[RMDB]
RNA sequence: GGGAACGACUCGAGUAGAGUCGAAAAGCGACACAUCCAAAUUGCGGGAAACUCCUUAGAGCUCUAGCUACCGCGGCCCCAUCGUGAGAUUAGGGUGCAGCACCAGGUUAAUGGCCUCGGGUAUGGUAAAAACGCUAGAGAUUGGACAAUCCGCAGCGCAUGGGGAGUAGUUCGCUACUCCCCAUGCAAAAGAAACAACAACAACAAC
Reactivity to 2A3 in 0.01 (KOAc 150mM, MgCl2 10mM, bicine 150mM(pH8.5), 24C), signal-to-noise 1, nucleotides 027 to 156: g050c040g140a060c030a030c000a200u100c070c020a010a100a120u080u010g000c000g000g000g000a090a080a000c050u050c030c000u090u100a100g020a070g230c000u000c000u000a000g000c010u000a000c010c000g000c000g000g000c000c000c010c020a000u010c000g040u030g030a020g010a050u020u130a290g000g010g000u100g000c010a000g000c000a000c000c000a000g050g000u020u000a030a020u010g010g000c010c050u040c260g020g000g030u130a300u050g010g000u000a020a000a000a000a000c010g000c000u000a000g000a000g000a010u030u050g000g000a010c000a000a050u040c000c000g020c000a010g000c010
Record summary: Structure probing data (2A3) for a 207-nucleotide construct. Source: RMDB library RSTRND, as collected in RNAgym. Conditions: 150 mM KOAc, 10 mM MgCl2 and 150 mM bicine (pH 8.5), 24 C. For 2A3 the reverse transcriptase was SuperScript II with manganese.